[RMDB]
RNA sequence: GGGAACGACUCGAGUAGAGUCGAAAACACGGUGUGGCACCCAGCACUUGCUUCAUCGACACCCUGCUCCUAGAGGCGUUGCAGGUGUGGCUGCUGUGUCACAUGUGCGUCAGUAGGUGGCAGAGAGAAACACUAGAGACUUCGGUCUCUAGUGUUUAAAAGAAACAACAACAACAAC
Reactivity to DMS in 0.01 (KOAc 150mM, MgCl2 10mM, bicine 150mM(pH8.5), 24C), signal-to-noise 5, nucleotides 027 to 126: c110a120c050g010g030u000g010u000g010g000c020a060c060c110c050a170g030c060a080c120u000u010g010c010u000u000c080a040u010c040g030a150c110a110c040c000c000u000g020c010u000c020c010u000a040g010a180g030g000c110g020u010u010g050c020a030g020g020u010g020u000g000g010c020u000g010c200u010g000u010g000u000c010a020c010a050u000g010u000g010c020g000u000c040a050g010u000a030g000g010u010g010g000c030a040g020a090g010a170g010
Reactivity to 2A3 in 0.01 (KOAc 150mM, MgCl2 10mM, bicine 150mM(pH8.5), 24C), signal-to-noise 3, nucleotides 027 to 126: c070a010c020g000g010u020g000u020g030g000c020a030c010c050c030a060g080c080a050c060u020u070g000c000u020u040c000a050u030c020g040a030c020a080c050c020c010u020g000c010u020c000c010u060a070g020a100g280g000c050g040u140u300g050c050a050g080g090u080g020u020g080g000c010u090g000c050u140g120u050g000u200c000a000c000a010u060g030u020g040c000g020u020c000a090g130u050a020g020g060u100g060g000c030a010g020a010g000a010g020
The record gives the reactivity of an RNA of 177 nucleotides to DMS and 2A3. It was measured as part of the RMDB library OK2TRN. The DMS profile rests on 5,712 reads.